[RMDB]
RNA sequence: GGGAACGACUCGAGUAGAGUCGAAAAGCAGCUCGCGAGCACGGGCAUCGACACGCGCCAGCUCGCCGAGCACGAACGCACGCUGCGCUCGAACAUCGCGCAGACCACGGCGGCAAUGCAGACGCAGACGCGCCAGCUCGAAGCCAUGGCCGAGCGCUCCAACCUUAGUAUUCGUACUAAGGUUGGAAAAAGAAACAACAACAACAAC
Reactivity to 2A3 in 0.01 (KOAc 150mM, MgCl2 10mM, bicine 150mM(pH8.5), 24C), signal-to-noise 1, nucleotides 027 to 156: g120c040a010g000c000u020c000g000c000g000a010g010c010a030c180g040g000g010c020a130u210c150g300a070c100a040c300g130c030g030c000c000a000g000c000u000c010g040c060c000g000a000g020c000a000c010g000a140a030c070g000c060a060c040g080c080u010g000c000g010c050u000c020g030a040a010c000a030u060c000g000c000g000c100a000g000a030c020c020a090c030g000g000c000g080g050c040a000a000u010g000c000a040g080a300c090g080c010a000g000a080c160g050c000g040c150c000a060g030c030u000c010g080a000a100g040c000c000a080u060g000g000c070c000g000a000g000c000g020c030

An RNA of 207 nucleotides, treated with 2A3 and read out base by base.
The RNA was probed in 150 mM KOAc, 10 mM MgCl2 and 150 mM bicine (pH 8.5) at 24 C.
For 2A3, 525 sequencing reads were counted.